[RMDB]
RNA sequence: GGGAACGACUCGAGUAGAGUCGAAAAAUGGGAGCAGUUAGAUCUGCAGGGUUAGUGCUCUGGCUACUGCACAGAAACGUAACCGGUAUAAUAGGAUAUGAAAAUGAGUUUAUAUGUAGUCUAGGUAAUAAUCACCUUGAUUCGUCAAGGUGAUUAUAAAAGAAACAACAACAACAAC
Reactivity to 2A3 in 0.01 (KOAc 150mM, MgCl2 10mM, bicine 150mM(pH8.5), 24C), signal-to-noise 9, nucleotides 027 to 126: a000u100g020g010g010a080g010c020a010g010u040u180a040g050a230u070c010u050g000c020a020g040g010g000u040u080a080g030u080g100c030u010c030u060g010g000c010u050a050c010u070g030c020a020c010a080g090a020a100a010c030g020u040a050a020c020c000g020g050u130a090u050a130a100u110a060g010g040a030u030a030u190g120a090a060a050a060u140g020a050g080u050u140u070a170u060a050u120g050u040a020g030u010c030u050a040g020g040u040a040
Reactivity to DMS in 0.01 (KOAc 150mM, MgCl2 10mM, bicine 150mM(pH8.5), 24C), signal-to-noise 9, nucleotides 027 to 126: a070u020g010g000g010a150g010c020a030g020u010u020a100g010a090u020c040u000g010c030a130g000g000g010u010u000a070g010u020g000c070u010c040u000g010g000c030u010a040c050u010g020c070a060c060a070g000a060a090a080c060g010u000a050a090c020c020g010g010u010a060u030a080a090u030a100g010g000a090u010a040u010g010a040a060a080a090u010g000a100g010u010u010u010a070u020a060u020g010u010a030g010u010c020u010a050g010g010u010a080
Notes
Structure probing data (2A3 and DMS) for a 177-nucleotide construct. For DMS the reverse transcriptase was MarathonRT. High 2A3 reactivity points to a flexible backbone, as in loops and unpaired stretches. The reactions ran in a buffer of 150 mM KOAc, 10 mM MgCl2 and 150 mM bicine (pH 8.5), at 24 C.